[RMDB]
This 177-nucleotide RNA was probed chemically with 2A3.
2A3 adducts were read by reverse transcription with SuperScript II with manganese.
It was measured as part of the RMDB library OK1LIB.
RNA sequence: GGGAACGACUCGAGUAGAGUCGAAAAGCCUUGUCCAUUUCAGCGCAGUCAAACUGGAACAAAAACGCGAAUGCGAAUAAAAGAAACAGAAAGUCGCACAACCAGACUCCCCGAGGCGAUACAAGUGCGCAGACAGUUCAUUCGUGAACUGUCUGCGAAAAGAAACAACAACAACAAC
Reactivity to 2A3 in 0.01 (KOAc 150mM, MgCl2 10mM, bicine 150mM(pH8.5), 24C), signal-to-noise 1, nucleotides 027 to 126: g000c000c000u020u090g020u080c000c000a110u110u040u000c190a110g030c080g120c030a020g050u000c000a110a070a070c010u000g020g040a000a120c040a010a300a000a000a000c000g000c000g140a100a130u110g020c000g020a000a000u150a160a040a080a000g100a000a190a000c050a000g150a080a050a010g020u050c000g000c040a000c050a120a040c000c000a030g000a080c100u130c000c010c010c010g130a100g000g120c100g090a000u000a100c020a010a010g040u020g100